Structure probing data (DMS and 2A3) for a 207-nucleotide construct.
It was measured as part of the RMDB library OK3TST.
The RNA was probed in 150 mM KOAc, 10 mM MgCl2 and 150 mM bicine (pH 8.5) at 24 C.
RNA sequence: GGGAACGACUCGAGUAGAGUCGAAAAAGACAAUGACCUGGAGCCAUACCCACGUACUGAACGCAAAUCAGGAAUGCAGUGCUGUCAUGGACAAAGCCAAUCUGUUACUGGGUUGUAUGAAAAGCAAUGUGACUUUACAAGACUAGGAAUUGAUAGAAGCAUUAAAAUGCUUCGGCAUUUUAAUGCUAAAAGAAACAACAACAACAAC
Reactivity to DMS in 0.01 (KOAc 150mM, MgCl2 10mM, bicine 150mM(pH8.5), 24C), signal-to-noise 3, nucleotides 027 to 156: a100g040a110c020a080a130u000g010a070c010c020u020g020g000a060g040c060c030a120u000a130c040c020c010a100c060g030u020a120c010u020g020a060a070c060g020c110a030a130a190u000c110a090g020g000a070a050u020g030c050a070g010u020g000c020u000g040u000c010a070u010g000g000a080c080a040a060a140g040c040c040a030a080u000c030u010g030u000u000a030c050u000g020g000g000u000u000g020u000a050u000g000a070a070a100a090g010c050a050a030u010g010u000g000a050c050u000u000u000a100c080a030a120g020a070c020u010a100g020g020a100a110u000u020g020a130u000a090g000a130
Reactivity to 2A3 in 0.01 (KOAc 150mM, MgCl2 10mM, bicine 150mM(pH8.5), 24C), signal-to-noise 3, nucleotides 027 to 156: a000g040a020c030a030a070u050g010a040c000c010u020g030g040a030g010c040c020a050u050a080c030c020c010a030c050g010u020a020c020u010g040a110a020c040g050c100a050a050a170u090c010a020g080g000a010a020u120g000c030a010g020u000g060c030u020g040u070c040a070u090g000g020a030c060a030a090a020g040c010c020a020a060u040c040u060g070u060u070a070c030u020g000g000g000u060u020g020u070a090u050g070a070a040a040a020g000c020a020a050u100g020u050g030a010c010u020u040u030a050c050a060a050g010a050c020u020a010g070g080a070a060u030u070g010a030u010a100g100a060
For DMS, 4,593 sequencing reads were counted.